Annotation: Structure probing data (DMS and 2A3) for a 177-nucleotide construct. For DMS, 1,261 sequencing reads were counted. For 2A3 the reverse transcriptase was SuperScript II with manganese. The RNA was probed in 150 mM KOAc, 10 mM MgCl2 and 150 mM bicine (pH 8.5) at 24 C.
RNA sequence: GGGAACGACUCGAGUAGAGUCGAAAAACUGCCAAGUUUGGAGAGCACCUCGGGCCGAAGGGUUGAGUAGCACUCAAAGGGAGGAAUCCACUCGGAGUAGAACAGAGAAAUCACCUCCAGAGGACCCGUUUUACAUUUUGUUCGCAAAAUGUAAAACAAAAGAAACAACAACAACAAC
Reactivity to DMS in 0.01 (KOAc 150mM, MgCl2 10mM, bicine 150mM(pH8.5), 24C), signal-to-noise 2, nucleotides 027 to 126: a050c080u020g010c150c160a130a120g030u000u020u000g000g000a170g020a070g020c090a060c160c060u000c070g010g010g020c010c040g010a060a070g000g000g010u000u000g020a060g000u000a050g000c040a300c030u010c030a000a080a140g000g010g000a070g000g000a100a090u000c070c030a050c060u020c070g000g010a040g000u000a060g010a060a120c100a130g010a080g000a090a080a130u000c030a080c120c020u000c000c010a100g000a090g010g000a090c050c040c090
Reactivity to 2A3 in 0.01 (KOAc 150mM, MgCl2 10mM, bicine 150mM(pH8.5), 24C), signal-to-noise 1, nucleotides 027 to 126: a000c020u070g050c030c010a060a040g030u000u050u080g080g000a070g000a020g050c010a000c000c000u020c020g000g050g000c030c000g020a050a060g070g000g000u060u020g020a010g010u030a040g040c030a020c070u020c000a050a060a030g090g000g020a030g010g020a040a040u040c010c010a050c020u030c030g030g000a020g000u130a090g050a100a060c050a030g080a000g040a090a090a010u050c020a030c010c000u000c000c020a010g020a030g020g020a030c000c000c020